[RMDB]
RNA sequence: GGGAACGACUCGAGUAGAGUCGAAAAGAAAGUCAUUGUCAUGCUGGAAUCAUCCGGCACCGACGAGCUGACGGAGUACACCGUUCAGACCGAUAACCGUGACGCGAUUCAGUGGGACGUGACCCGGGUCACAUCCCACCUUCGGGUGGGAUGUGACAAAAGAAACAACAACAACAAC
Reactivity to DMS in 0.01 (KOAc 150mM, MgCl2 10mM, bicine 150mM(pH8.5), 24C), signal-to-noise 2, nucleotides 027 to 126: g020a120a090a100g020u000c000a010u000u010g020u010c030a090u000g000c020u000g000g010a020a070u000c080a130u000c040c000g000g020c050a020c140c070g020a130c010g000a120g020c040u000g010a050c000g010g000a300g020u010a060c300a160c000c000g000u020u000c020a010g000a070c030c000g000a090u020a100a100c040c060g020u000g010a030c090g030c210g000a050u000u000c020a020g020u000g010g010g010a030c010g010u000g010a070c010c020c040g060g000
Reactivity to 2A3 in 0.01 (KOAc 150mM, MgCl2 10mM, bicine 150mM(pH8.5), 24C), signal-to-noise 3, nucleotides 027 to 126: g120a070a080a000g100u070c060a030u200u300g010u000c010a020u130g000c020u030g080g120a050a110u040c020a010u050c020c000g010g020c030a030c030c020g120a100c020g010a040g000c000u000g000a000c000g030g000a050g110u170a060c120a070c100c000g020u130u110c020a020g020a090c000c050g030a060u110a120a090c020c020g060u190g020a010c070g020c100g180a010u000u030c010a000g010u030g020g030g000a010c010g000u010g010a020c000c010c000g090g120
Annotation: An RNA of 177 nucleotides, treated with DMS and 2A3 and read out base by base. 2A3 adducts were read by reverse transcription with SuperScript II with manganese. The 2A3 profile rests on 2,953 reads. Source: RMDB library OK2TRN, as collected in RNAgym. Reactivities are rounded to 0.1 and cut off at 0 and 3.